[RMDB]
RNA sequence: GGGAACGACUCGAGUAGAGUCGAAAAGAUAUGGACGGAGCUUUUGACGCUCAUGGGUCGGAAACGACCUGUGAGCGAUAAGCUCGUCCUAAGUCAAAACGAUAAUGGCGUUCGCGCCAUUAUCGAACCCCUACAUAAACUUCGGUUUAUGUAGGGGAAAAGAAACAACAACAACAAC
Reactivity to DMS in 0.01 (KOAc 150mM, MgCl2 10mM, bicine 150mM(pH8.5), 24C), signal-to-noise 3, nucleotides 027 to 126: g010a010u010a280u000g000g000a010c000g010g020a020g010c000u000u000u000u010g020a160c090g010c000u000c010a010u000g010g000g010u000c000g010g000a060a040a140c000g010a010c000c000u000g010u000g010a010g010c000g010a010u010a010a020g010c010u000c000g000u000c000c000u000a010a060g010u000c040a080a060a130a180c030g000a010u000a000a010u000g000g010c000g020u000u030c190g000c010g020c000c000a000u000u000a000u000c000g010a050a070
Reactivity to 2A3 in 0.01 (KOAc 150mM, MgCl2 10mM, bicine 150mM(pH8.5), 24C), signal-to-noise 5, nucleotides 027 to 126: g020a020u050a030u120g020g030a010c240g150g050a040g010c020u090u100u140u230g250a170c120g000c000u000c000a000u010g000g000g010u010c010g000g010a040a060a040c000g000a000c000c010u000g010u000g000a000g010c010g000a010u000a000a000g000c000u000c000g000u010c000c000u010a100a000g040u010c030a030a000a100a140c010g000a000u000a010a010u000g000g000c010g040u060u070c270g020c010g000c160c010a000u000u000a000u010c000g000a000a010
An RNA of 177 nucleotides, treated with DMS and 2A3 and read out base by base. DMS adducts were read by reverse transcription with MarathonRT. The RNA was probed in 150 mM KOAc, 10 mM MgCl2 and 150 mM bicine (pH 8.5) at 24 C. The DMS profile rests on 5,726 reads. The data come from the RNA Mapping Database (RMDB), library TTRDEL.